RNA sequence: GGGAACGACUCGAGUAGAGUCGAAAAAGGUAAAUUGCGUGGCUUGUUGAAAAUUAAUGCCUUUCUUGACAUUGAUAAUACACAGGAGUAUCGAGAAAAAGCCUUAACAACAAUAAAGAAUAUGCAAGAGGGUUCGAGUUACAACGGUUUGACGCCACUAUCCCAAGAAGUUCGCUUCUUGGGAUAGAAAAGAAACAACAACAACAAC
Reactivity to DMS in 0.01 (KOAc 150mM, MgCl2 10mM, bicine 150mM(pH8.5), 24C), signal-to-noise 2, nucleotides 027 to 156: a060g000g040u000a050a070a210u000u000g000c050g050u000g000g010c020u000u020g040u010u010g000a060a050a200a090u000u000a020a000u000g030c020c010u000u000u000c090u010u000g010a030c030a020u020u010g010a120u020a080a120u000a140c060a140c130a190g020g020a140g030u000a070u000c020g040a190g020a020a060a060a050a140g000c030c030u010u000a020a110c060a010a230c070a020a080u000a000a090a090g020a140a030u000a040u000g010c050a040a030g000a130g020g010g000u000u000c090g000a120g020u000u010a030c050a030a050c080g020g000u000u000u010g010a100c100g020c020c000a130
Reactivity to 2A3 in 0.01 (KOAc 150mM, MgCl2 10mM, bicine 150mM(pH8.5), 24C), signal-to-noise 3, nucleotides 027 to 156: a000g080g010u090a100a120a090u160u120g020c020g040u020g020g070c040u030u140g030u060u050g060a090a050a030a010u130u060a040a040u090g010c000c010u070u220u040c020u010u010g010a020c020a050u030u030g040a000u100a180a080u120a140c140a030c040a090g000g020a030g060u080a040u120c070g000a070g100a140a040a000a020a010g020c020c010u060u090a020a030c040a000a010c000a000a000u140a110a110a010g030a030a030u100a030u180g030c010a030a000g030a040g040g010g010u060u090c080g000a020g020u090u060a040c040a040a000c060g010g010u020u050u090g040a020c020g010c000c000a020